[RMDB]
RNA sequence: GGGAACGACUCGAGUAGAGUCGAAAAAGGGGCGGUUGGCCUCGUUAAAAGCCGCAAAGUUAUAGUUGCAAACGACGAUAACUACGCUCUAGCCGCUUAAUGCCGCUAGCCAUCUACCACACGCUUCGCACAUGGGCAGUGGAUUUGAUGGUCAUCUACUUAGAAAGAAGUUCGCUUCUUUCUAAGUAAAAGAAACAACAACAACAAC
Reactivity to DMS in 0.01 (KOAc 150mM, MgCl2 10mM, bicine 150mM(pH8.5), 24C), signal-to-noise 2, nucleotides 027 to 156: a070g020g010g020g060c000g030g030u000u010g050g030c000c040u040c050g000u000u030a040a060a150a080g000c020c040g000c130a110a090a170g040u000u000a060u010a050g010u010u020g000c030a200a060a140c030g000a010c030g030a120u010a030a040c010u000a090c130g030c030u000c080u000a090g000c000c030g000c000u010u000a070a160u000g020c010c060g020c000u000a070g020c010c000a030u000c000u010a190c000c030a020c030a070c130g000c000u000u010c040g030c140a110c160a090u010g040g020g000c010a230g000u020g030g010a100u000u010u000g000a070u010g000g010u010c030a080u010c040u000
Reactivity to 2A3 in 0.01 (KOAc 150mM, MgCl2 10mM, bicine 150mM(pH8.5), 24C), signal-to-noise 4, nucleotides 027 to 156: a000g040g000g000g000c030g000g040u020u030g040g040c000c000u000c000g000u010u020a040a070a000a020g030c030c040g000c070a150a110a020g010u020u040a040u020a080g010u010u040g080c110a130a100a030c110g010a010c020g010a040u010a040a010c020u070a050c060g000c020u000c010u050a010g000c000c020g010c030u100u150a100a030u270g010c030c000g000c030u010a010g000c000c000a000u000c000u010a020c010c010a020c010a020c160g030c000u190u260c070g070c080a100c020a300u230g010g020g000c010a010g020u030g000g040a100u250u050u100g010a010u000g000g010u010c000a020u010c000u000
The record gives the reactivity of an RNA of 207 nucleotides to DMS and 2A3. It was measured as part of the RMDB library ARCHII. Reactivities are given for positions 27 through 156. Values are in units of 0.01, from 0 to 300, in steps of 10. Conditions: 150 mM KOAc, 10 mM MgCl2 and 150 mM bicine (pH 8.5), 24 C.